[RMDB]
RNA sequence: GGGAACGACUCGAGUAGAGUCGAAAAGCUGCCUCCAGCUCCUUGCACAGCUGCCGAUAGCGACCAGCGGUGUGGGAGGCACGCAAGUAGUCGCUUUCCGGGCGGAGCACGGCAUGCGCCGCGGCUAAUUUUAUAAAUGGUUCGCCAUUUAUAAAAUAAAAGAAACAACAACAACAAC
Reactivity to 2A3 in 0.01 (KOAc 150mM, MgCl2 10mM, bicine 150mM(pH8.5), 24C), signal-to-noise 9, nucleotides 027 to 126: g010c010u010g010c000c000u010c000c010a100g040c050u040c010c010u050u100g010c040a040c010a040g020c000u030g020c020c030g170a140u110a080g060c030g020a040c030c020a010g010c020g060g000u030g000u040g040g030g010a020g030g010c000a000c070g020c000a070a050g050u090a010g000u070c000g000c000u030u010u000c030c000g040g030g000c020g020g030a020g010c030a040c060g100g000c080a070u180g070c070g020c040c010g050c020g020g000c020u060a060
Reactivity to DMS in 0.01 (KOAc 150mM, MgCl2 10mM, bicine 150mM(pH8.5), 24C), signal-to-noise 9, nucleotides 027 to 126: g010c010u000g010c010c000u000c000c010a170g010c070u010c030c030u000u020g010c010a040c020a070g000c010u000g000c090c050g000a170u020a080g010c040g010a060c200c030a060g010c000g010g020u000g010u010g000g000g000a020g000g010c000a010c130g020c040a070a120g010u020a050g000u000c010g010c030u000u010u010c030c020g000g010g010c030g000g000a060g000c010a110c060g000g010c090a220u020g010c070g020c010c020g000c050g000g010c030u010a050
Structure probing data (2A3 and DMS) for a 177-nucleotide construct.
For 2A3, 28,040 sequencing reads were counted.
Conditions: 150 mM KOAc, 10 mM MgCl2 and 150 mM bicine (pH 8.5), 24 C.
Reactivities are given for positions 27 through 126.
DMS adducts were read by reverse transcription with MarathonRT.